[RMDB]
RNA sequence: GGGAACGACUCGAGUAGAGUCGAAAAGCGUACUACUAGAUUGAAGUCCAGGACAUGCCUCAAAAAUGCCAAAUCCCAAAUAGGAUUUGGCGCCAAUGAGGCAACAGCCUGGAUGGAGGAUCUAGUAUCGCAAAAGGUAUUUGUUCGCAAAUACCAAGUCUACUCACAUCUUCGGAUGUGAGUAGACAAAAGAAACAACAACAACAAC
Reactivity to 2A3 in 0.01 (KOAc 150mM, MgCl2 10mM, bicine 150mM(pH8.5), 24C), signal-to-noise 1, nucleotides 027 to 156: g000c010g040u120a060c070u000a000c000u000a000g000a000u000u050g030a040a000g010u000c000c000a020g010g000a010c030a210u100g000c010c020u000c000a050a040a000a000a010u020g000c020c010a000a000a000u020c000c030c190a270a300a160u300a150g000g000a000u010u000u000g000g000c010g000c000c000a010a050u000g000a000g030g030c010a000a000c000a010g000c000c000u000g000g000a000u000g000g000a020g110g000a000u000c010u000a000g000u000a000u030c000g000c010a050a030a000a130g030g000u000a010u000u000u000g060u030u140c250g010c150a010a000a000u000a000c000c010a000a000
The data come from the RNA Mapping Database (RMDB), library RNAMAK. Chemical mapping of a 207-nucleotide RNA with 2A3. The 2A3 profile rests on 1,204 reads. The reactions ran in a buffer of 150 mM KOAc, 10 mM MgCl2 and 150 mM bicine (pH 8.5), at 24 C.